[RMDB]
RNA sequence: GGGAACGACUCGAGUAGAGUCGAAAAUUAAUGAAGCAAAUCUCUAAACGCCAACGAUGAGCGUUUCGCAAUCGCCGCUUAAGGCUUUUGCCGAGGCUGCUUGAGCCUUGUUACCAAAGAAAAGCCGAAAACCCAAAUGUCUUCGGACAUUUGGGAACUUCCAGUGAAUGUUCGCAUUCACUGGAAGAAAAGAAACAACAACAACAAC
Reactivity to 2A3 in 0.01 (KOAc 150mM, MgCl2 10mM, bicine 150mM(pH8.5), 24C), signal-to-noise 2, nucleotides 027 to 156: u180u080a000a100u140g090a080a000g070c050a040a210a110u010c060u000c010u130a020a020a010c020g010c020c010a100a050c210g190a170u240g060a030g010c000g010u010u050u040c010g000c000a000a040u010c010g010c030c010g080c100u150u220a110a070g010g000c020u000u000u000u000g000c000c000g000a000g000g000c030u040g000c000u100u060g010a000g000c000c000u010u010g070u100u080a060c030c040a020a020a000g020a000a050a010a000g040c000c020g090a020a040a070a140c020c020c030a030a000a000u010g000u000c000u050u060c170g060g000a010c010a000u000u000u000g000g000g000a000a000